[RMDB]
RNA sequence: GGGAACGACUCGAGUAGAGUCGAAAAAACGGAAUUGCCGUGCAUCUCGAUACACAAACUGUCCCCCGUAUGCCGGAUGCCCUGGUCAUUCUAGACACCCCAAAUCCCGGUAUGAUCUACGCGCCUCGAUCCUGCUAAUCUUCGGAUUAGCAGGAUCAAAAGAAACAACAACAACAAC
Reactivity to 2A3 in 0.01 (KOAc 150mM, MgCl2 10mM, bicine 150mM(pH8.5), 24C), signal-to-noise 5, nucleotides 027 to 126: a000a010c120g010g030a130a080u100u070g080c000c000g000u020g000c010a050u000c060u030c080g070a040u080a130c070a010c060a160a210a110c070u090g130u210c000c010c000c000c000g020u050a030u120g130c080c010g020g030a020u040g010c040c010c000u020g000g020u030c010a050u060u010c000u020a020g010a010c010a050c010c010c010c010a000a100a060u040c030c010c010g000g010u130a080u140g040a060u020c020u050a010c030g040c010g030c020c010u080c060
Reactivity to DMS in 0.01 (KOAc 150mM, MgCl2 10mM, bicine 150mM(pH8.5), 24C), signal-to-noise 2, nucleotides 027 to 126: a030a040c070g010g000a090a040u020u050g040c020c030g000u020g000c170a030u000c020u010c120g000a120u020a030c110a090c170a100a070a080c130u030g000u010c020c000c020c060c010g000u040a030u000g000c090c070g000g000a090u010g000c010c020c000u000g010g000u030c100a110u000u020c030u000a110g010a100c180a080c000c020c000c000a090a140a070u010c010c000c020g020g000u040a040u000g010a060u000c030u040a020c070g000c040g000c030c070u020c110